[RMDB]
RNA sequence: GGGAACGACUCGAGUAGAGUCGAAAAUACAAGGUAUCUUAACGCCAGCAGAAUAUCGUGUGUGUAGUACGAAUGAAGGAUUACUAAAUAUUAAACGAACACGUUCUGAAUUAGUUGAAUCCGGUGAAGUAUUUGAAUAGUUCGCUAUUCAAAUACUAAAAGAAACAACAACAACAAC
Reactivity to 2A3 in 0.01 (KOAc 150mM, MgCl2 10mM, bicine 150mM(pH8.5), 24C), signal-to-noise 9, nucleotides 027 to 126: u140a020c050a040a030g090g010u070a060u070c050u100u100a080a020c060g030c030c010a020g000c020a000g070a120a040u100a030u160c040g010u030g000u010g000u000g010u060a020g020u030a020c070g060a080a070u190g080a120a070g030g020a000u050u010a030c030u060a010a050a130u290a070u140u230a090a080a020c040g020a040a020c120a010c090g000u030u010c030u050g060a090a080u040u030a080g010u010u080g090a030a020u020c000c010g040g030u070g080a040
Reactivity to DMS in 0.01 (KOAc 150mM, MgCl2 10mM, bicine 150mM(pH8.5), 24C), signal-to-noise 7, nucleotides 027 to 126: u020a060c090a080a080g010g010u010a010u020c060u010u010a090a090c090g000c030c040a070g000c060a050g010a090a060u030a060u010c030g010u010g010u010g020u020g000u010a060g010u020a040c080g010a080a070u020g000a160a100g010g000a050u010u010a040c040u010a020a050a090u030a120u030u020a050a080a060c070g010a080a070c160a060c070g010u000u000c050u010g000a080a080u010u000a060g000u010u000g000a010a090u000c010c010g000g030u010g000a080